[RMDB]
RNA sequence: GGGAACGACUCGAGUAGAGUCGAAAAAUGCUUUCAAUCAAGCUAUUGGUAACAUUACACAGGCUUUUGGUAAGGUUAAUGAUGCUAUACAUCAAACAUCACAAGGUCUUGCCACUGUUGCUAAAGCGAAGAUACGUUAUUUCGAUAACGUAUCUUCAAAAGAAACAACAACAACAAC
Reactivity to 2A3 in 0.01 (KOAc 150mM, MgCl2 10mM, bicine 150mM(pH8.5), 24C), signal-to-noise 9, nucleotides 027 to 126: a000u100g010c020u050u080u080c060a080a110u040c050a080a030g010c010u100a180u130u060g010g000u020a020a020c010a050u030u120a040c070a010c030a040g050g000c000u130u130u120u080g060g010u090a110a120g050g010u020u050a070a030u090g010a000u000g020c120u180a060u080a300c020a030u050c030a050a050a010c020a020u060c020a010c010a090a050g020g000u000c000u030u030g030c020c010a030c040u030g030u060u020g000c010u040a080a020a010g080c050
Reactivity to DMS in 0.01 (KOAc 150mM, MgCl2 10mM, bicine 150mM(pH8.5), 24C), signal-to-noise 9, nucleotides 027 to 126: a070u010g010c070u010u000u010c090a070a100u010c210a080a120g000c020u000a110u000u000g000g000u000a020a020c030a030u000u000a100c170a070c180a060g000g010c020u000u010u000u000g010g010u010a060a100g000g010u000u000a100a150u000g000a010u000g000c090u010a130u010a270c090a040u000c060a040a040a080c090a020u000c030a090c060a040a050g010g000u000c000u000u000g010c070c070a080c300u000g000u000u000g000c010u000a020a030a070g010c120

Record summary
Chemical mapping of a 177-nucleotide RNA with 2A3 and DMS. For 2A3, 22,035 sequencing reads were counted. Source: RMDB library OK2TST, as collected in RNAgym.